[RMDB]
RNA sequence: GGGAACGACUCGAGUAGAGUCGAAAAGAAGAGAGUAGAAGAUGGCCGUCAUGGUCCGAGCCCCUCGCUGGCGCCGGCUGGGCAACACCAUUGCACUCCGGUGGCGUAUGGUGCAAGAGAGAAAGAACGAUGGUCAGCUAUUCGUAGCUGACCAUCGAAAAGAAACAACAACAACAAC
Reactivity to 2A3 in 0.01 (KOAc 150mM, MgCl2 10mM, bicine 150mM(pH8.5), 24C), signal-to-noise 2, nucleotides 027 to 126: g190a020a010g060a000g080a020g030u100a020g080a040a000g040a200u060g000g100c010c010g010u220c150a120u200g020g000u000c000c000g040a110g010c000c000c000c000u030c080g000c020u020g120g000c000g010c060c020g010g010c080u070g000g020g000c000a000a000c070a010c050c000a010u000u070g000c000a000c000u020c020c050g000g060u030g040g000c050g010u140a060u190g020g020u020g000c050a100a030g010a000g000a000g050a070a000a000g080a150a000
Reactivity to DMS in 0.01 (KOAc 150mM, MgCl2 10mM, bicine 150mM(pH8.5), 24C), signal-to-noise 2, nucleotides 027 to 126: g020a150a030g000a020g000a030g010u010a120g010a120a170g000a010u060g000g000c030c050g020u000c140a060u070g000g050u030c060c030g010a160g000c030c030c030c050u000c200g000c000u010g010g000c000g010c050c060g010g000c080u070g030g010g000c040a020a020c060a100c260c180a090u010u010g000c000a080c120u000c080c070g040g000u000g000g030c000g020u000a010u030g000g000u010g000c110a080a030g000a060g050a180g020a060a020a120g000a090a100

Chemical mapping of a 177-nucleotide RNA with 2A3 and DMS.
It was measured as part of the RMDB library OK1LIB.
Conditions: 150 mM KOAc, 10 mM MgCl2 and 150 mM bicine (pH 8.5), 24 C.